Chemical mapping of a 177-nucleotide RNA with 2A3 and DMS. The 2A3 profile rests on 3,842 reads. 2A3 adducts were read by reverse transcription with SuperScript II with manganese. For DMS, 2,702 sequencing reads were counted. Source: RMDB library OK2TST, as collected in RNAgym. Conditions: 150 mM KOAc, 10 mM MgCl2 and 150 mM bicine (pH 8.5), 24 C.
[RMDB]
RNA sequence: GGGAACGACUCGAGUAGAGUCGAAAAGCAGCGUGGACAGCGGGAAGACCGACAGCGAAUCGUCGAUGAACUCGCACAGCAACAGAUUUGCGUAUUCCUCCGUGCUGUACUCAAGCCUCAACCGGUCUACUGUUCCCUUUUUCGAAAGGGAACAGUAAAAAGAAACAACAACAACAAC
Reactivity to 2A3 in 0.01 (KOAc 150mM, MgCl2 10mM, bicine 150mM(pH8.5), 24C), signal-to-noise 3, nucleotides 027 to 126: g020c020a000g010c000g040u030g030g010a030c030a070g010c040g000g030g020a110a070g040a060c040c000g020a010c040a050g070c040g140a070a120u110c070g020u010c010g030a050u070g030a050a060c010u010c020g000c020a040c040a070g020c010a030a020c020a120g200a190u050u060u060g020c000g000u050a130u110u060c030c020u000c000c000g020u030g000c020u010g010u030a030c030u040c040a060a020g010c010c000u040c050a030a060c070c020g030g060u050c050
Reactivity to DMS in 0.01 (KOAc 150mM, MgCl2 10mM, bicine 150mM(pH8.5), 24C), signal-to-noise 4, nucleotides 027 to 126: g000c030a050g010c090g030u010g010g000a060c150a120g020c010g030g010g020a070a140g030a060c120c050g000a050c040a100g000c100g010a080a060u020c090g010u000c020g030a050u000g000a080a250c060u000c040g020c050a090c140a070g010c050a070a050c160a140g010a130u000u000u000g020c010g020u000a140u010u010c110c080u020c020c050g000u000g000c020u000g010u000a060c080u010c080a070a160g000c030c030u000c050a050a080c080c030g000g000u010c120